An RNA of 177 nucleotides, treated with 2A3 and DMS and read out base by base.

RNA sequence: GGGAACGACUCGAGUAGAGUCGAAAAGAGUGUGUCAGAGACUCUGACACUGUCACACACACUGUCUCAGUCUCUGUGUGACUCUGUCAGUCUGUGAGAGAGAGUCAGAGUGAGAGUGAGUCUCAGAGAUGGCAACGCUAUUCGUAGCGUUGCCAUCAAAAGAAACAACAACAACAAC
Reactivity to 2A3 in 0.01 (KOAc 150mM, MgCl2 10mM, bicine 150mM(pH8.5), 24C), signal-to-noise 2, nucleotides 027 to 126: g050a000g050u090g010u040g020u030c030a030g020a030g010a120c070u050c000u140g010a000c000a010c050u020g110u000c010a040c000a000c000a000c000a000c080u020g070u110c010u020c080a060g020u010c010u000c020u070g120u040g050u030g120a010c000u000c000u020g100u020c010a030g020u000c020u070g130u140g070a070g010a010g010a000g000a000g060u030c020a030g020a030g140u070g010a060g010a040g040u040g010a010g020u040c000u030c040a060g010a000
Reactivity to DMS in 0.01 (KOAc 150mM, MgCl2 10mM, bicine 150mM(pH8.5), 24C), signal-to-noise 3, nucleotides 027 to 126: g010a060g020u010g010u000g020u000c120a050g000a150g000a070c070u000c010u010g000a070c030a100c060u000g010u000c020a060c030a050c020a040c090a040c020u000g010u000c040u000c060a030g010u000c000u000c050u010g020u010g030u000g020a030c000u000c060u010g000u010c010a050g000u000c080u010g000u010g010a080g010a050g000a070g010a160g020u010c020a030g010a110g000u000g000a100g010a090g020u010g000a100g010u000c010u000c020a110g010a180
Source: RMDB library OK2TRN, as collected in RNAgym.